[RMDB]
RNA sequence: GGGAACGACUCGAGUAGAGUCGAAAAGAUAUGGAGAAUCCUGUGGGAGUCCGUAGGUCGGAAACGACCUAUAGGACGAGGAUCACACAUGGAUUCUCCUAAGUCAAAACCUAUGUUCGCAUAGGAAGAAACAUAGAGAGUUCGCUCUCUAUGUUUCAAAAGAAACAACAACAACAAC
Reactivity to DMS in 0.01 (KOAc 150mM, MgCl2 10mM, bicine 150mM(pH8.5), 24C), signal-to-noise 3, nucleotides 027 to 126: g000a020u000a260u000g010g000a000g010a030a000u000c000c000u010g030u000g000g010g000a190g020u000c000c000g000u000a010g010g010u000c010g020g020a080a050a120c000g020a020c000c000u000a000u000a060g030g000a010c000g010a120g030g010a270u020c060a090c000a020c020a010u010g000g000a020u000u000c000u000c000c010u000a000a040g000u000c030a130a080a120a160c000c000u010a010u000g010u000u010c230g030c010a010u000a010g010g000a140a130
Reactivity to 2A3 in 0.01 (KOAc 150mM, MgCl2 10mM, bicine 150mM(pH8.5), 24C), signal-to-noise 3, nucleotides 027 to 126: g000a010u030a010u050g010g000a000g000a000a000u000c000c010u020g000u010g020g120g130a300g020u010c000c000g000u010a000g010g010u000c000g000g010a090a000a010c010g000a000c020c070u010a000u040a080g000g000a000c010g000a030g020g070a100u190c040a010c000a000c000a100u300g020g000a000u020u000c000u000c000c010u000a000a000g000u000c010a030a020a050a170c000c000u000a000u020g040u030u130c300g000c150a010u000a000g030g000a040a100